Structure probing data (2A3) for a 177-nucleotide construct.
Conditions: 150 mM KOAc, 10 mM MgCl2 and 150 mM bicine (pH 8.5), 24 C.
2A3 adducts were read by reverse transcription with SuperScript II with manganese.
The data come from the RNA Mapping Database (RMDB), library OK1LIB.
For 2A3, 466 sequencing reads were counted.
RNA sequence: GGGAACGACUCGAGUAGAGUCGAAAAAGAGGUAAUCUGCAUCUCGCCGUGGUUGAUAUGUAAAAUUUGCGUCGCCUCUUCGACUUUCCACGGUUCGCCAUACUCCACCACCAUGCGCAGAAAAAUGCAGGGAGUGCGAGUUCGCUCGCACUCCCUGAAAAGAAACAACAACAACAAC
Reactivity to 2A3 in 0.01 (KOAc 150mM, MgCl2 10mM, bicine 150mM(pH8.5), 24C), signal-to-noise 1, nucleotides 027 to 126: a000g000a050g000g090u100a140a060u120c040u020g000c000a010u000c020u020c050g030c000c000g010u030g010g010u000u110g000a130u000a090u250g090u150a040a130a100a160u060u180u160g080c060g000u030c020g010c000c000u070c000u000u050c010g070a030c020u000u040u030c010c000a000c040g060g000u000u050c020g000c000c000a070u100a020c010u000c010c000a010c000c000a010c000c000a030u160g020c040g010c170a000g180a020a100a020a000a010u210g010